[RMDB]
Chemical mapping of a 207-nucleotide RNA with 2A3. The RNA was probed in 150 mM KOAc, 10 mM MgCl2 and 150 mM bicine (pH 8.5) at 24 C. The 2A3 profile rests on 742 reads. It was measured as part of the RMDB library OK3TST.
RNA sequence: GGGAACGACUCGAGUAGAGUCGAAAAUGCCAUGGUCUGAACCCACUGAGCGUUACCUAGGUACUUCGAGGAGUACUCGGACUGGGACCGGUUCGGUACUCGGUUACCGUCCCACUCAAUGAGCUCGGCAAGGAUCAUCCGGCGCUGCUCCGCAGUGCGCCCUUAGCCGAUUCGUCGGCUAAGGGCGAAAAGAAACAACAACAACAAC
Reactivity to 2A3 in 0.01 (KOAc 150mM, MgCl2 10mM, bicine 150mM(pH8.5), 24C), signal-to-noise 2, nucleotides 027 to 156: u170g010c020c000a020u050g010g030u050c040u110g040a100a070c020c000c000a030c040u090g040a010g010c010g110u200u300a120c050c030u060a070g120g010u040a090c060u090u030c000g100a120g090g050a000g120u000a020c010u000c090g010g000a020c040u050g000g000g050a090c070c080g040g000u090u070c050g000g040u090a110c090u030c070g040g000u070u030a050c000c000g020u030c010c000c000a020c000u040c010a050a280u150g040a060g010c010u030c020g030g000c030a100a140g040g000a000u000c000a000u090c070c070g000g000c000g000c020u000g010c030u060c300c170g000c010a000g030u040g060